This 177-nucleotide RNA was probed chemically with DMS. Values cover nucleotides 27 to 126. The RNA was probed in 150 mM KOAc, 10 mM MgCl2 and 150 mM bicine (pH 8.5) at 24 C.

RNA sequence: GGGAACGACUCGAGUAGAGUCGAAAAUGGUUAUCGAUAUGGAACUAGACAUGCUCACCGUGCCGAAGAACUCGGAAACGAGGGAGGCACGAAGUGAGCAACAGCUAGUUCCUAAGUCUUGCAAAAAUCGAAACUUACGCUUCGGCGUAAGUUUCGAAAAAGAAACAACAACAACAAC
Reactivity to DMS in 0.01 (KOAc 150mM, MgCl2 10mM, bicine 150mM(pH8.5), 24C), signal-to-noise 1, nucleotides 027 to 126: u010g020g000u000u000a160u000c050g020a030u020a300u000g000g000a000a010c010u000a000g000a140c170a150u000g010c010u000c010a020c000c010g010u000g050c000c000g010a030a100g000a090a170c020u000c000g000g000a070a120a160c000g000a000g000g020g020a020g010g010c000a000c010g000a010a050g000u000g000a000g000c030a000a030c240a130g000c000u000a020g000u000u000c000c000u000a000a120g000u000c050u000u000g030c100a010a070a080a040a060
Source: RMDB library TTRDEL, as collected in RNAgym. For DMS the reverse transcriptase was MarathonRT.